[RMDB]
RNA sequence: GGGAACGACUCGAGUAGAGUCGAAAAUUAAUCCGGCUUUAAGUUGACGAGGGCAGCGUUUAUCGAGACAUCGGCGGGUGCCCUGCGGUCUUCCUGCGACCGUUAGAGGACUGGUAAACCAAUUUAAUGAACAUAGGCAAUUCGUUGCCUAUGUUCAAAAAGAAACAACAACAACAAC
Reactivity to DMS in 0.01 (KOAc 150mM, MgCl2 10mM, bicine 150mM(pH8.5), 24C), signal-to-noise 1, nucleotides 027 to 126: u010u000a100a090u010c010c030g020g000c070u000u000u000a000a080g010u000u010g020a090c050g000a060g020g000g000c020a070g000c040g000u000u020u040a080u010c040g000a060g000a060c300a090u000c040g030g010c070g010g010g040u000g010c030c010c010u010g000c010g020g000u010c010u000u000c050c040u000g040c130g020a010c050c020g010u010u000a040g000a080g000g000a070c090u000g010g000u000a060a070a100c050c070a060a060u010u010u000a050a210